[RMDB]
RNA sequence: GGGAACGACUCGAGUAGAGUCGAAAAAUAAACUGGACAUACUCAUUUUAUCCAAUGAAAACAAUCUAUUGAUAGCUCAUAGUACAACUAUCAUACAACACUAUGAUUUUAUAAAUUCUUUUCUGUUAGAUACUGAUGAUAUUCAUGGUUAAUUCCAUAUUACGUCAGUGUUCGCACUGACGUAAUAAAAAGAAACAACAACAACAAC
Reactivity to DMS in 0.01 (KOAc 150mM, MgCl2 10mM, bicine 150mM(pH8.5), 24C), signal-to-noise 2, nucleotides 027 to 156: a040u010a070a070a070c050u010g000g020a200c060a090u000a110c120u000c020a020u020u020u000u000a070u000c010c010a050a070u000g000a050a000a040a060c070a070a070u010c020u010a100u010u000g010a050u000a010g020c100u000c100a200u000a140g010u000a150c050a040a030c010u010a050u000c040a080u010a140c080a040a050c080a090c090u010a070u010g010a150u000u000u000u000a110u000a090a030a060u000u000c040u010u010u000u000c010u010g020u000u000a010g000a050u000a010c140u010g010a010u000g040a040u000a030u020u000c080a110u010g010g010u010u000a030a080u000u000c020c000a170
Reactivity to 2A3 in 0.01 (KOAc 150mM, MgCl2 10mM, bicine 150mM(pH8.5), 24C), signal-to-noise 5, nucleotides 027 to 156: a000u060a010a020a010c010u040g010g020a020c020a040u060a040c050u010c020a020u020u050u070u090a020u010c020c040a080a060u090g020a030a030a010a030c030a020a050u030c030u080a080u060u140g090a070u070a040g020c020u010c050a050u030a050g050u070a050c030a180a060c110u150a090u200c040a040u100a130c070a150a010c030a010c050u030a020u030g020a010u060u080u080u060a130u050a050a070a070u060u080c010u050u080u010u000c020u050g050u060u080a020g000a030u030a040c060u090g020a010u030g010a010u020a040u080u090c070a080u100g000g020u020u030a040a020u100u010c010c010a000
Chemical mapping of a 207-nucleotide RNA with DMS and 2A3. The reactions ran in a buffer of 150 mM KOAc, 10 mM MgCl2 and 150 mM bicine (pH 8.5), at 24 C. High 2A3 reactivity points to a flexible backbone, as in loops and unpaired stretches. Values cover nucleotides 27 to 156. The 2A3 profile rests on 3,066 reads.